Source: RMDB library OK1LIB, as collected in RNAgym. Chemical mapping of a 177-nucleotide RNA with 2A3 and DMS. For 2A3 the reverse transcriptase was SuperScript II with manganese. DMS adducts were read by reverse transcription with MarathonRT. The 2A3 profile rests on 824 reads.

[RMDB]
RNA sequence: GGGAACGACUCGAGUAGAGUCGAAAAGGUCCGAUCCAUGGAGAAAGGGCUCCUUAAGCCAUCCUUCCAAGCGUCUGAUGCUCGCUUUUUGCUGGACGUUGAAGCGAUCGGGGUCCAAAUUAUUGGCCUAACCGCAGGUCUUCGGACCUGCGGUUAGAAAAGAAACAACAACAACAAC
Reactivity to 2A3 in 0.01 (KOAc 150mM, MgCl2 10mM, bicine 150mM(pH8.5), 24C), signal-to-noise 2, nucleotides 027 to 126: g010g050u020c000c000g000a000u000c000c020a120u130g020g000a080g020a040a170a080g130g000g000c040u170c070c060u140u280a030a000g000c060c030a120u180c050c010u060u000c010c020a060a050g030c040g000u000c020u100g300a300u190g130c050u030c050g240c080u070u190u060u300u100g000c020u050g010g020a000c010g000u030u010g100a100a010g030c080g050a010u000c000g020g000g000g000u000c020c000a110a000a000u300u300a070u030u180g070g010c000
Reactivity to DMS in 0.01 (KOAc 150mM, MgCl2 10mM, bicine 150mM(pH8.5), 24C), signal-to-noise 2, nucleotides 027 to 126: g050g040u050c000c000g000a040u000c030c000a250u020g000g000a020g000a020a040a110g000g000g020c030u010c300c180u020u080a090a060g020c040c000a200u000c140c050u010u020c020c020a050a080g000c000g000u000c000u020g010a180u020g060c040u030c110g080c230u000u010u090u030u000g020c050u000g000g000a020c020g010u000u030g000a030a120g000c080g000a000u000c040g000g000g010g000u010c000c050a010a090a160u040u020a170u040u010g010g010c200